Background: Chemical mapping of a 207-nucleotide RNA with 2A3 and DMS. High DMS reactivity at an A or C suggests that its Watson-Crick edge is free. For DMS the reverse transcriptase was MarathonRT. Reactivities are given for positions 27 through 156. As a SHAPE reagent, 2A3 marks flexible, mostly unpaired nucleotides at the ribose 2'-OH. The DMS profile rests on 2,185 reads.

RNA sequence: GGGAACGACUCGAGUAGAGUCGAAAAGAGGGAUGGCUUCAUGUGCGUGAUAUGCGAGGACGACAAGAAGCUACACGUUCACCACAUCGACAAUUGGCCGAUGAACAACGCGUCAACGAAUUUGGUAACCCUUUGUCCAGCCUGCCACAAGGAGGCCAGCGGCCUCUUGAUUCGUCAAGAGGCCGCUAAAAGAAACAACAACAACAAC
Reactivity to 2A3 in 0.01 (KOAc 150mM, MgCl2 10mM, bicine 150mM(pH8.5), 24C), signal-to-noise 4, nucleotides 027 to 156: g040a010g050g020g000a090u090g000g010c010u030u010c060a040u060g050u170g090c020g010u060g070a210u090a080u240g140c080g040a090g150g030a020c020g000a010c030a010a090g040a000a000g020c000u060a080c050a000c040g040u060u060c030a000c060c000a010c010a040u020c020g030a040c060a170a300u040u040g040g000c030c010g000a070u160g130a070a050c060a060a040c090g040c100g010u020c000a030a030c040g080a090a130u120u100u070g030g000u030a080a100c010c000c020u040u050u060g070u040c020c020a000g000c020c010u130g060c040c010a160c050a110a100g060g000a010g000g000c000c000
Reactivity to DMS in 0.01 (KOAc 150mM, MgCl2 10mM, bicine 150mM(pH8.5), 24C), signal-to-noise 1, nucleotides 027 to 156: g020a070g020g000g020a150u000g010g040c010u030u000c050a190u000g020u000g000c050g010u010g030a150u010a050u010g040c090g040a170g060g040a110c030g000a120c040a090a130g000a130a050g030c020u000a070c060a030c060g000u010u000c020a060c020c110a280c030a030u010c030g010a060c020a080a200u010u000g020g020c010c010g000a050u000g030a140a150c070a160a010c030g000c090g040u000c070a020a120c020g010a070a050u000u000u000g010g040u010a060a110c010c010c000u010u000u010g000u010c000c000a080g030c010c020u020g000c000c080a120c070a060a190g000g000a020g010g000c020c100